[RMDB]
RNA sequence: GGGAACGACUCGAGUAGAGUCGAAAAAUAUAGCAAACGUUGAUAAGCUCUCUGAAAAUUUGAAGUUCAGGAUGAAAUUGAUAGUUGAAAAUAUCAUACUUGCAUGCAACCAGGAAGAUGCUAAGAGCGUAUCCUUAGGAUUCGUCCUAAGGAUACGAAAAGAAACAACAACAACAAC
Reactivity to DMS in 0.01 (KOAc 150mM, MgCl2 10mM, bicine 150mM(pH8.5), 24C), signal-to-noise 5, nucleotides 027 to 126: a090u010a060u000a070g030c110a070a050a080c070g010u000u010g000a050u000a080a120g000c070u000c020u010c010u000g000a040a020a050a110u000u010u010g010a130a150g010u010u000c020a020g000g010a040u000g010a040a060a060u000u000g000a020u000a030g020u010u010g000a070a080a070a090u000a020u010c040a060u000a080c070u000u010g010c100a040u000g000c090a030a080c080c050a080g000g000a050a070g010a070u000g010c040u010a040a090g010a140g010
Reactivity to 2A3 in 0.01 (KOAc 150mM, MgCl2 10mM, bicine 150mM(pH8.5), 24C), signal-to-noise 2, nucleotides 027 to 126: a000u060a010u060a000g040c020a030a010a070c040g030u030u020g020a080u010a070a060g030c010u000c000u000c000u070g070a040a070a080a140u170u210u160g090a150a040g030u020u030c010a000g060g000a060u060g040a070a030a090u070u040g010a000u030a070g050u070u100g090a080a090a010a030u100a030u050c020a000u020a090c030u060u020g010c010a010u080g010c020a030a050c000c000a020g050g050a040a020g090a050u060g010c050u090a100a010g020a010g160